[RMDB]
RNA sequence: GGGAACGACUCGAGUAGAGUCGAAAAUGGGCGAUCGCUCGCUGUUUUUAUGGCUGGCUUUCAGCGGGCUGGAGGAGCCGGGAGCGGAGGCGGAGGACCGAGCCAAAAACGUCAGCCGAGGCCGGGCAAUAUCGUGGACUGUUCGCAGUCCACGAAAGAUAGUCUAGUAGUUCGCUACUAGACUAUCAAAAGAAACAACAACAACAAC
Reactivity to 2A3 in 0.01 (KOAc 150mM, MgCl2 10mM, bicine 150mM(pH8.5), 24C), signal-to-noise 2, nucleotides 027 to 156: u090g000g000g000c050g010a060u080c090g000c060u010c000g020c030u060g070u040u050u020u060u060a160u160g020g020c000u010g010g000c000u010u080u050c020a010g010c020g000g050g000c010u040g050g020a050g010g010a020g070c050c110g000g000g000a070g050c060g010g090a030g030g000c090g040g030a070g010g010a030c050c050g020a020g050c040c010a060a070a000a000a000c040g010u020c010a000g000c000c000g010a050g000g010c010c040g020g030g000c030a060a050u070a020u180c000g010u010g000g010a000c000u000g020u050u060c130g010c090a000g000u000c000c000a000c000g000a000a000a000

Annotation: Structure probing data (2A3) for a 207-nucleotide construct.